Chemical mapping of a 177-nucleotide RNA with 2A3 and DMS. It was measured as part of the RMDB library OK1LIB. The DMS profile rests on 1,499 reads. For 2A3 the reverse transcriptase was SuperScript II with manganese. The 2A3 profile rests on 837 reads. The reactions ran in a buffer of 150 mM KOAc, 10 mM MgCl2 and 150 mM bicine (pH 8.5), at 24 C.

[RMDB]
RNA sequence: GGGAACGACUCGAGUAGAGUCGAAAAUAUACAUCAGAAGUCGGCACAACUCCCGACUCGCGGUGAGCGAUGCAGCGUAGCAUCCGCUACGCAGCUGCUGUGCGGAUGGCUAGCAAAAGCUAGCCUAGGUAAUCGAGCGAUUCGUCGCUCGAUUACCAAAAGAAACAACAACAACAAC
Reactivity to 2A3 in 0.01 (KOAc 150mM, MgCl2 10mM, bicine 150mM(pH8.5), 24C), signal-to-noise 2, nucleotides 027 to 126: u080a010u010a000c070a140u120c080a140g050a000a040g050u000c000g000g000c220a060c070a300a280c070u040c000c000c000g070a080c010u020c030g000c060g040g090u090g040a020g010c010g110a120u160g000c010a000g000c030g000u030a010g000c010a000u030c100c240g000c000u000a000c000g000c010a000g010c020u100g010c000u000g150u080g070c010g050g000a050u280g030g000c000u000a000g000c000a030a080a300a000g000c000u000a000g000c030c000u000a030
Reactivity to DMS in 0.01 (KOAc 150mM, MgCl2 10mM, bicine 150mM(pH8.5), 24C), signal-to-noise 2, nucleotides 027 to 126: u070a150u020a220c030a100u000c060a150g010a100a000g000u000c040g000g050c300a130c080a040a120c300u020c020c000c020g000a030c000u000c070g000c300g020g000u010g000a060g000c000g000a070u020g000c070a030g000c140g000u000a040g000c000a170u090c300c220g000c000u000a000c040g000c000a010g000c000u000g000c000u010g000u000g000c070g000g000a020u010g010g000c000u000a000g000c000a060a110a100a100g000c000u000a000g020c000c000u000a050